[RMDB]
RNA sequence: GGGAACGACUCGAGUAGAGUCGAAAAAUGAGAUCGCAUCUUGCACACUGUGCUAAUUUGAGAUUCUCAUGCCUCCUACUUGGAGAGAUCUGGACUAGAAGUCAGGGCAUCUGACUCUGCCAGCCACAAAACGUACAAGGCUUCGGCCUUGUACGAACAUUCAACUUAGCUUCGGCUAAGUUGAAUGAAAAGAAACAACAACAACAAC
Reactivity to DMS in 0.01 (KOAc 150mM, MgCl2 10mM, bicine 150mM(pH8.5), 24C), signal-to-noise 2, nucleotides 027 to 156: a030u000g000a030g000a020u000c000g000c010a050u000c070u000u000g040c000a020c020a220c180u030g000u000g020c020u000a020a010u000u010u000g000a020g000a000u000u030c010u000c010a070u000g010c060c060u000c020c010u020a060c110u000u000g020g000a110g000a150g000a130u000c030u010g010g000a050c050u000a050g000a150a090g020u000c020a040g010g030g030c140a200u000c010u040g000a020c010u000c040u000g000c000c020a070g000c050c040a140c060a060a070a080a150c010g020u000a000c000a010a040g010g010c000u000u020c300g070g020c000c000u000u000g000u000a000c010g000a030a090
Reactivity to 2A3 in 0.01 (KOAc 150mM, MgCl2 10mM, bicine 150mM(pH8.5), 24C), signal-to-noise 6, nucleotides 027 to 156: a000u010g000a000g000a000u000c010g000c030a010u010c000u020u020g010c010a010c040a060c190u300g010u010g030c080u150a060a040u030u010u010g050a050g000a030u300u000c000u000c000a000u040g040c000c000u000c010c010u100a250c100u140u270g040g010a050g000a010g020a130u050c010u010g000g040a080c070u110a100g020a170a010g110u000c010a000g020g070g190c070a140u140c110u000g000a000c000u000c000u000g000c000c010a020g050c030c000a070c040a010a120a070a020c010g000u000a000c000a000a010g000g000c000u030u130c170g060g000c000c000u000u010g000u000a000c000g000a000a000
An RNA of 207 nucleotides, treated with DMS and 2A3 and read out base by base. The RNA was probed in 150 mM KOAc, 10 mM MgCl2 and 150 mM bicine (pH 8.5) at 24 C. For 2A3, 5,201 sequencing reads were counted. The DMS profile rests on 4,083 reads. For DMS the reverse transcriptase was MarathonRT. DMS (dimethyl sulfate) methylates the pairing face of unpaired adenines and cytosines. For 2A3 the reverse transcriptase was SuperScript II with manganese.